[RMDB]
RNA sequence: GGGAACGACUCGAGUAGAGUCGAAAAGGAACAUCCUUCGGGAUGUUCCAUAGGCGGCGCCUCUCGCUAAGCGGCGCGCAGAGGCGCGCAGCGCAGCUUGUAAGUAAGCCUAGUUCGCUAGGCUUAACUGAUGAGAGUUUUUCGAAACUCUCAUCAGAAAAGAAACAACAACAACAAC
Reactivity to DMS in 0.01 (KOAc 150mM, MgCl2 10mM, bicine 150mM(pH8.5), 24C), signal-to-noise 4, nucleotides 027 to 126: g010g000a010a010c010a000u000c000c000u000u010c220g020g010g010a000u000g010u000u000c000c000a040u010a040g010g000c020g010g010c020g010c010c000u000c020u010c050g010c040u000a100a140g010c160g010g010c260g010c050g020c140a040g010a030g000g000c000g010c010g010c030a040g010c020g010c100a070g010c080u000u000g010u010a060a130g010u000a010a010g000c000c000u000a000g010u000u010c190g020c000u000a010g000g000c000u000u000a010a110
Reactivity to 2A3 in 0.01 (KOAc 150mM, MgCl2 10mM, bicine 150mM(pH8.5), 24C), signal-to-noise 2, nucleotides 027 to 126: g000g000a020a010c040a000u000c010c010u050u100c230g030g020g010a000u000g010u000u020c000c000a000u010a000g030g010c040g020g040c000g000c010c000u000c010u010c010g000c010u040a100a050g210c070g150g000c020g010c000g030c060a000g010a020g060g000c010g000c010g000c020a030g000c060g000c000a020g010c060u110u160g100u130a070a130g030u020a010a010g020c000c010u010a020g000u040u030c190g000c040u000a000g020g000c000u000u010a020a000